[RMDB]
RNA sequence: GGGAACGACUCGAGUAGAGUCGAAAAUGGGACAGCUCGGACAUGUCCUGCCAGGUCAACUGGAUGCCCGCCGCCUGGGCGAUCGCCAGCAGGUGCAGGGUGUGGUUGGUCGAGCCGCCGGUGGCGAGAUCGUCCGGAGUUUCGACUCCGGACGAUCAAAAGAAACAACAACAACAAC
Reactivity to 2A3 in 0.01 (KOAc 150mM, MgCl2 10mM, bicine 150mM(pH8.5), 24C), signal-to-noise 1, nucleotides 027 to 126: u160g000g020g020a010c000a030g070c080u120c170g060g060a040c090a140u040g000u000c000c000u050g040c000c000a000g000g030u150c060a130a050c070u030g020g020a090u080g050c010c020c010g010c010c070g070c010c020u110g150g050g000c020g040a120u140c060g010c030c020a000g030c000a030g080g120u110g050c020a010g000g000g080u090g030u100g090g050u060u090g000g000u100c070g020a020g050c010c010g000c000c030g090g040u020g010g000c070g020a060
Reactivity to DMS in 0.01 (KOAc 150mM, MgCl2 10mM, bicine 150mM(pH8.5), 24C), signal-to-noise 1, nucleotides 027 to 126: u000g010g020g000a010c020a060g020c070u010c130g020g010a140c060a080u000g010u000c010c010u010g030c030c020a060g020g000u020c200a140a120c020u020g000g010a130u020g000c030c020c010g030c080c050g000c000c040u030g000g010g000c000g000a110u000c100g000c020c010a020g000c000a070g000g010u000g000c070a080g000g020g010u020g010u010g010g000u010u020g000g030u020c000g000a050g030c080c030g020c030c010g000g070u010g020g030c010g020a100